Record summary:
The record gives the reactivity of an RNA of 177 nucleotides to 2A3 and DMS. Source: RMDB library OK2TRN, as collected in RNAgym. For 2A3 the reverse transcriptase was SuperScript II with manganese. The RNA was probed in 150 mM KOAc, 10 mM MgCl2 and 150 mM bicine (pH 8.5) at 24 C. The 2A3 profile rests on 2,507 reads. Values cover nucleotides 27 to 126.
[RMDB]
RNA sequence: GGGAACGACUCGAGUAGAGUCGAAAAAUAAAGGGAUAAAGUGAUGAUGGAGAUGUAUUUCAUGUGUUGUGAUUUUGUCUUGAAAUCUUUAUACAUGAGUUUGUAUCGUAUAUACCUGUAUUUACGGCAUUUACGAUCCAUUCGUGGAUCGUAAAUGAAAAGAAACAACAACAACAAC
Reactivity to 2A3 in 0.01 (KOAc 150mM, MgCl2 10mM, bicine 150mM(pH8.5), 24C), signal-to-noise 3, nucleotides 027 to 126: a010u180a020a070a000g040g020g010a050u060a110a100a020g090u070g080a100u050g020a030u050g080g030a080g010a030u040g040u070a090u030u080u040c020a010u000g020u000g010u040u010g050u050g020a020u030u020u060u040g110u080c030u060u080g020a030a010a010u020c000u040u200u030a020u000a010c010a000u020g000a020g090u030u070u060g060u000a050u020c010g000u030a020u000a000u010a130c000c020u050g010u070a090u020u100u030a040c050g030g000
Reactivity to DMS in 0.01 (KOAc 150mM, MgCl2 10mM, bicine 150mM(pH8.5), 24C), signal-to-noise 5, nucleotides 027 to 126: a040u010a040a060a060g000g000g010a060u010a040a080a130g020u010g000a060u010g010a080u000g000g010a130g010a050u000g010u000a050u010u010u000c020a010u000g010u000g010u000u000g010u010g010a030u010u000u000u000g000u020c210u000u030g000a020a030a010u000c010u000u000u000a020u000a010c020a020u000g000a060g000u000u000u010g010u010a030u000c020g030u000a080u010a080u000a060c020c030u000g010u000a050u000u000u000a090c100g010g000